[RMDB]
RNA sequence: GGGAACGACUCGAGUAGAGUCGAAAAGAUAUGGAUACAAUGGAGUCAGUCGCACUGAACUACAGCCGGGAGUCGGAAACGACUCCUGGCUGCAGUGCGACUGACGAUGAAAUUGUAUCCUAAGUCACGGUACUUAACUGUUCGCAGUUAAGUACCGAAAAGAAACAACAACAACAAC
Reactivity to DMS in 0.01 (KOAc 150mM, MgCl2 10mM, bicine 150mM(pH8.5), 24C), signal-to-noise 1, nucleotides 027 to 126: g000a070u000a300u040g000g000a010u000a020c000a010a000u000g000g000a060g010u000c000a020g000u020c010g000c020a020c000u010g000a080a030c120u000a300c010a020g000c000c000g000g030g010a050g010u000c010g020g000a110a070a260c000g020a020c010u010c000c000u000g010g000c000u000g000c000a000g010u030g010c000g010a020c010u010g000a000c000g020a020u000g010a080a140a020u020u000g000u000a000u000c000c000u000a010a100g020u000c020a240